[RMDB]
The record gives the reactivity of an RNA of 177 nucleotides to 2A3 and DMS. The 2A3 profile rests on 1,155 reads. High DMS reactivity at an A or C suggests that its Watson-Crick edge is free.

RNA sequence: GGGAACGACUCGAGUAGAGUCGAAAAGGCACAGCCGGGAGGCUGUACUCUGUGGGCCUGGACUUGGCUGCCCUUGACACGCGCAUUGUGGUCAAGCUGCCCAUCACAGAUGCCGGGGUGGAGGCAGUGAGGACUCCAAAUUCGUUUGGAGUCCUCAAAAAGAAACAACAACAACAAC
Reactivity to 2A3 in 0.01 (KOAc 150mM, MgCl2 10mM, bicine 150mM(pH8.5), 24C), signal-to-noise 1, nucleotides 027 to 126: g010g000c030a000c020a040g040c000c030g050g110g030a070g000g000c000u020g020u020a020c100u090c010u010g060u010g040g010g020c030c060u050g020g030a080c010u030u040g030g000c010u000g010c050c120c030u010u000g070a100c130a040c160g110c000g090c150a130u080u180g000u060g050g000u040c020a000a000g060c030u010g010c000c010c010a050u090c030a030c030a040g060a080u130g010c030c030g030g010g000g020u080g030g020a060g040g000c040a010g040
Reactivity to DMS in 0.01 (KOAc 150mM, MgCl2 10mM, bicine 150mM(pH8.5), 24C), signal-to-noise 2, nucleotides 027 to 126: g010g000c020a060c020a050g000c000c000g010g050g000a230g010g010c000u000g020u010a010c070u010c070u000g010u000g000g000g020c050c160u000g010g020a060c090u000u000g010g000c020u000g010c080c120c010u000u000g020a060c040a080c130g010c200g000c150a060u000u000g010u000g010g000u000c030a030a050g000c050u000g000c030c010c080a100u000c040a060c040a010g010a080u000g020c050c020g000g000g010g020u010g020g000a130g000g000c060a040g020
The DMS profile rests on 2,080 reads. Values are in units of 0.01, from 0 to 300, in steps of 10.